Structure probing data (2A3 and DMS) for a 177-nucleotide construct. The data come from the RNA Mapping Database (RMDB), library OK2TRN. For DMS the reverse transcriptase was MarathonRT.

[RMDB]
RNA sequence: GGGAACGACUCGAGUAGAGUCGAAAAAAGUGGCUCUUGGACAGGAAGAGGCACAUGAUUUGUUCCUCGCCGCAGCAUACACUGGCACUGUUCCGCAGCCACCAGCAAGGAACGCGCAAGAGCAGAAACGCUAUACCGUAUUCGUACGGUAUAGCGUAAAAGAAACAACAACAACAAC
Reactivity to 2A3 in 0.01 (KOAc 150mM, MgCl2 10mM, bicine 150mM(pH8.5), 24C), signal-to-noise 3, nucleotides 027 to 126: a000a010g060u050g020g000c010u030c010u070u130g010g020a020c030a030g120g040a060a210g020a060g000g070c040a010c020a010u120g140a300u170u140u130g030u020u020c010c010u000c010g000c020c020g020c040a060g050c020a080u080a190c060a020c140u040g010g010c040a010c040u040g030u170u050c010c020g000c020a000g010c010c000a000c000c010a000g000c020a060a020g080g050a150a030c050g000c000g000c100a060a010g030a040g100c020a020g060a050a130
Reactivity to DMS in 0.01 (KOAc 150mM, MgCl2 10mM, bicine 150mM(pH8.5), 24C), signal-to-noise 4, nucleotides 027 to 126: a070a070g020u010g000g000c000u000c040u000u020g000g000a060c120a100g000g000a090a090g000a000g000g020c070a020c010a020u000g020a160u000u000u010g020u000u000c000c010u000c030g020c080c060g030c130a060g020c100a090u010a090c240a060c060u010g000g010c100a220c040u000g000u000u000c040c110g020c190a090g000c000c020a050c040c030a060g000c100a050a110g010g010a070a050c090g010c040g000c060a080a070g000a110g000c050a100g020a080a070

Background: The RNA was probed in 150 mM KOAc, 10 mM MgCl2 and 150 mM bicine (pH 8.5) at 24 C.